[RMDB]
RNA sequence: GGGAACGACUCGAGUAGAGUCGAAAAGCUCCUUCAGGUGAACGAUCUCGGUUGUUUCUCUGAAGGCAUGAUCACCCCGUCCGAUGCGGAAGUUCGUGCUUCCGUCGAACGCGAAAGUCGUACGGCGAAAACGAGUUACCGUUCGCGGUAACUCGAACAGAGAAUCCACGUUCGCGUGGAUUCUCUGAAAAGAAACAACAACAACAAC
Reactivity to 2A3 in 0.01 (KOAc 150mM, MgCl2 10mM, bicine 150mM(pH8.5), 24C), signal-to-noise 2, nucleotides 027 to 156: g000c020u020c000c000u000u000c020a110g090g000u120g140a010a020c020g000a010u010c030u050c190g090g020u030u000g000u000u090u000c020u010c000u000g010a000a000g000g020c040a150u100g020a080u130c050a180c020c040c000c000g000u080c040c000g060a080u080g000c000g000g070a020a060g070u150u300c100g130u300g070c090u040u010c050c040g010u080c060g040a100a040c080g000c010g070a090a030a020g000u050c000g000u020a000c000g010g010c090g070a050a030a010a160c000g000a000g000u000u000a000c010c000g000u000u060c150g010c000g110g000u010a000a000c020u000c000g000a010a000